[RMDB]
RNA sequence: GGGAACGACUCGAGUAGAGUCGAAAAGGUCUGAUCUUCGGAUCAGACCAACUCUGAUUCCCAAUAGCUGGGUAUCUUGGCUAAGACGGAUAGGCGUUGCCACUCAGGGGGGUUUCGACCCCCCUAAUGAAAUAUGCCUGUUCGCAGGCAUAUUUCAAAAAGAAACAACAACAACAAC
Reactivity to DMS in 0.01 (KOAc 150mM, MgCl2 10mM, bicine 150mM(pH8.5), 24C), signal-to-noise 2, nucleotides 027 to 126: g010g000u010c000u010g000a000u000c000u000u000c170g020g010a000u000c000a010g000a000c000c020a010a030c100u010c050u000g000a180u000u000c000c010c010a120a180u000a040g000c000u020g030g000g030u000a070u020c020u010u010g010g010c030u000a060a070g010a230c090g010g010a010u010a080g000g020c030g000u000u000g010c090c010a050c240u010c130a060g010g000g000g020g000g010u000u000u000c190g000a060c000c000c000c000c000c000u000a000a030
The data come from the RNA Mapping Database (RMDB), library M2PK50. An RNA of 177 nucleotides, treated with DMS and read out base by base. DMS adducts were read by reverse transcription with MarathonRT.